[RMDB]
RNA sequence: GGGAACGACUCGAGUAGAGUCGAAAAACUGCAUCUACGGAUGCAGAACUACGUUCAUCCAAUUUAUUUGGACGCAUUAAAUGAGAAUAGGGAACGGGAUUCUCAUACGCAGGCUACGGCCUGCGAAAAAACUCCUUAUGCUUCGGCAUAAGGAGAACAAGAGAUAUGGGUUCGCCCAUAUCUCUUGAAAAGAAACAACAACAACAAC
Reactivity to 2A3 in 0.01 (KOAc 150mM, MgCl2 10mM, bicine 150mM(pH8.5), 24C), signal-to-noise 3, nucleotides 027 to 156: a000c010u010g000c000a000u000c000u010a040c220g120g000a000u000g000c000a000g000a010a010c050u080a030c010g010u000u010c000a010u000c000c010a030a020u100u210u140a130u130u130u060g000g020a010c000g010c020a080u120u140a150a190a070u010g000a010g000a010a000u010a020g060g020g020a000a010c000g000g000g010a000u010u010c000u000c000a000u020a030c020g000c010a000g000g000c010u040a110c300g080g000c010c010u000g010c010g000a010a000a000a000a000a000c000u000c000c000u000u000a000u000g010c000u020u060c170g090g000c000a000u000a000a000g000g000a000g000a000a020
Reactivity to DMS in 0.01 (KOAc 150mM, MgCl2 10mM, bicine 150mM(pH8.5), 24C), signal-to-noise 2, nucleotides 027 to 156: a190c000u000g010c000a020u010c040u010a080c300g030g030a020u000g020c010a000g020a090a090c000u000a040c000g020u000u000c010a110u000c080c080a080a150u000u020u000a120u040u010u000g000g000a040c000g000c040a100u010u010a070a100a090u010g010a100g010a100a100u000a120g000g000g000a070a020c030g020g000g010a300u000u010c000u000c000a080u000a120c040g030c000a000g020g020c030u010a170c240g080g010c020c030u010g060c000g000a000a010a100a070a030a040c020u000c000c000u000u000a010u000g020c000u000u010c300g010g010c000a000u000a000a020g020g010a000g030a030a060